The record gives the reactivity of an RNA of 177 nucleotides to DMS and 2A3. For 2A3, 1,891 sequencing reads were counted. 2A3 adducts were read by reverse transcription with SuperScript II with manganese. Source: RMDB library OK1LIB, as collected in RNAgym.
RNA sequence: GGGAACGACUCGAGUAGAGUCGAAAAGUUGAAAAUAUCAACAGUAAGGUCGUAGGCUGUACAAUUUUUAACGAUAAAGGAAAUUUCAGUUUGUUGUUUGUCGUUUGCAACGAACCUGACCUCUGUGCUUAUAUGUCGGUUUCGACCGACAUAUAAGAAAAGAAACAACAACAACAAC
Reactivity to DMS in 0.01 (KOAc 150mM, MgCl2 10mM, bicine 150mM(pH8.5), 24C), signal-to-noise 3, nucleotides 027 to 126: g000u000u000g000a020a000a050a060u020a070u030c090a040a000c000a040g020u010a120a080g000g030u010c020g010u010a080g000g000c030u000g020u000a090c210a070a010u000u000u000u000u000a010a060c030g010a060u020a050a080a090g010g020a030a060a060u020u010u020c130a080g000u000u010u010g060u000u000g000u000u020u000g010u000c050g020u010u010u020g020c040a040a040c050g000a020a070c020c000u000g020a050c040c030u000c020u010g000u020g010
Reactivity to 2A3 in 0.01 (KOAc 150mM, MgCl2 10mM, bicine 150mM(pH8.5), 24C), signal-to-noise 4, nucleotides 027 to 126: g030u030u010g080a050a040a090a050u250a070u050c030a040a010c000a010g040u070a130a040g010g050u020c060g080u150a030g060g050c040u050g020u080a060c100a140a120u030u040u030u110u200a050a020c040g000a030u150a180a070a060g150g010a020a040a090u180u190u130c120a100g030u050u100u100g110u040u050g020u000u070u110g050u010c000g000u030u160u150g020c010a020a040c070g030a010a030c000c000u010g040a010c000c010u050c010u010g050u060g010